[RMDB]
RNA sequence: GGGAACGACUCGAGUAGAGUCGAAAACCUCUUCUUCCUCCCUGCUGAGGUUCUUUCCUCCCGCGGAGAGUUGCUUCCUCUUGUUCUCGAGGGCCUUCCUUCUGCGGUGAUCCUCCCUCUCCUUGUCGAGUAAAUUGUUGUUCGCAACAAUUUACUCAAAAGAAACAACAACAACAAC
Reactivity to 2A3 in 0.01 (KOAc 150mM, MgCl2 10mM, bicine 150mM(pH8.5), 24C), signal-to-noise 2, nucleotides 027 to 126: c000c000u000c010u050u000c000u090u040c010c010u000c020c000c020u010g000c010u020g020a010g030g000u050u010c000u030u070u040c010c010u030c000c010c000g030c020g000g020a030g000a010g010u030u030g030c060u130u060c040c010u030c000u060u150g090u140u050c070u030c070g020a030g010g030g000c020c000u030u050c010c030u040u020c010u010g020c000g040g010u010g000a030u040c000c010u000c010c020c000u030c010u020c020c040u070u070g100u100c030
Reactivity to DMS in 0.01 (KOAc 150mM, MgCl2 10mM, bicine 150mM(pH8.5), 24C), signal-to-noise 2, nucleotides 027 to 126: c000c000u010c070u000u000c010u010u000c050c030u000c000c010c020u000g030c050u010g000a070g010g010u000u000c080u000u000u010c030c020u000c050c020c040g000c060g000g000a070g010a060g010u000u000g000c070u010u000c010c010u000c030u010u000g010u000u000c050u000c050g000a070g000g000g000c300c030u000u000c010c000u000u010c040u000g010c050g020g020u010g000a060u010c030c010u000c000c010c010u010c030u010c030c030u000u000g010u010c130
Structure probing data (2A3 and DMS) for a 177-nucleotide construct. Conditions: 150 mM KOAc, 10 mM MgCl2 and 150 mM bicine (pH 8.5), 24 C.